[RMDB]
RNA sequence: GGGAACGACUCGAGUAGAGUCGAAAACAGUAGGAACAAAGUAGUGAACAAAAGUUGUUCUUACUCUUUGGUGUUUACAGUCCAACAGGGCAGUAAUAACAUUUACUGAGUAUGGUGAGGUGUGGAGCUCAUUGGACGGAUUCGUCCGUCCAAUGAGAAAAGAAACAACAACAACAAC
Reactivity to DMS in 0.01 (KOAc 150mM, MgCl2 10mM, bicine 150mM(pH8.5), 24C), signal-to-noise 2, nucleotides 027 to 126: c100a060g010u000a010g000g010a040a090c020a030a050a070g010u000a080g020u010g010a090a100c100a050a080a130a140g010u010u000g000u010u000c000u010u000a010c000u000c070u010u000u000g000g020u000g020u000u000u000a020c060a040g030u010c020c010a060a110c300a120g000g030g020c000a030g010u010a030a080u000a080a060c080a060u000u010u000a080c050u000g000a100g010u000a040u010g020g010u010g000a050g000g000u000g000u010g000g000a150g010
Reactivity to 2A3 in 0.01 (KOAc 150mM, MgCl2 10mM, bicine 150mM(pH8.5), 24C), signal-to-noise 1, nucleotides 027 to 126: c030a020g030u020a040g050g050a010a010c040a000a020a020g080u180a090g020u160g100a080a020c050a010a140a030a070g040u060u020g000u010u000c000u010u000a000c020u040c030u090u030u080g040g030u010g030u000u000u090a010c020a030g070u000c000c000a040a020c020a190g030g000g060c000a010g040u020a020a080u120a110a020c040a000u020u050u150a050c020u010g020a040g100u100a100u110g000g000u120g020a040g040g030u210g020u070g050g080a020g040